[RMDB]
RNA sequence: GGGAACGACUCGAGUAGAGUCGAAAAGAUAUGGACCCAACUAGACUUCAGGAGAGGUGACAUGGUCUCACUCGGAAACGAGUGGUGACCAACAGCACCCUCCUGAAGUCUAGUUGGGUCCUAAGUCCGUUUACUAAAUGUUCGCAUUUAGUAAACGAAAAGAAACAACAACAACAAC
Reactivity to DMS in 0.01 (KOAc 150mM, MgCl2 10mM, bicine 150mM(pH8.5), 24C), signal-to-noise 3, nucleotides 027 to 126: g000a140u010a300u010g020g010a010c000c000c000a010a010c010u000a000g000a030c000u000u000c010a020g000g020a020g000a150g040g000u000g000a060c080a300u000g000g000u000c010u000c020a010c000u000c000g010g010a150a110a230c000g010a020g040u000g000g000u000g010a010c000c000a010a030c230a150g010c030a000c000c000c010u000c000c000u000g000a000a020g000u000c000u000a000g000u010u000g000g010g000u000c000c000u000a010a080g010u000c030